[RMDB]
RNA sequence: GGGAACGACUCGAGUAGAGUCGAAAAGAGCAUCUUUGAGCAGGCAGUUGAGUCGGUGAUUAAGAGGAUGGAAAAGUCAGGCUUUGAUAAGUGUGAAUAUGUAACUGAUGCGCAAGCCAUAUUCAAGACGUUCUUCACCUUUCGAGGUGAAGAACGUAAAAGAAACAACAACAACAAC
Reactivity to DMS in 0.01 (KOAc 150mM, MgCl2 10mM, bicine 150mM(pH8.5), 24C), signal-to-noise 2, nucleotides 027 to 126: g010a150g000c070a030u020c070u000u000u000g000a030g000c070a020g010g000c000a170g010u000u000g000a170g040u000c000g000g090u020g000a120u000u010a080a220g000a100g000g000a070u000g000g000a000a020a020a080g000u000c030a030g010g020c010u000u000u000g030a060u020a000a050g070u020g040u010g000a040a000u000a080u000g010u020a120a070c120u000g010a030u040g000c050g000c120a010a110g000c050c000a000u030a020u000u000c000a060a070g000
Reactivity to 2A3 in 0.01 (KOAc 150mM, MgCl2 10mM, bicine 150mM(pH8.5), 24C), signal-to-noise 2, nucleotides 027 to 126: g030a010g020c070a110u020c050u000u180u000g060a020g010c040a090g060g000c000a010g000u140u150g140a040g040u070c020g000g060u050g070a100u100u070a010a030g040a050g090g000a020u090g010g040a020a020a050a020g020u050c050a000g010g040c030u080u070u110g060a090u050a110a040g070u000g020u000g140a000a020u020a020u010g000u040a030a050c030u040g050a130u030g100c040g010c020a010a000g020c020c000a000u030a010u010u010c000a000a040g110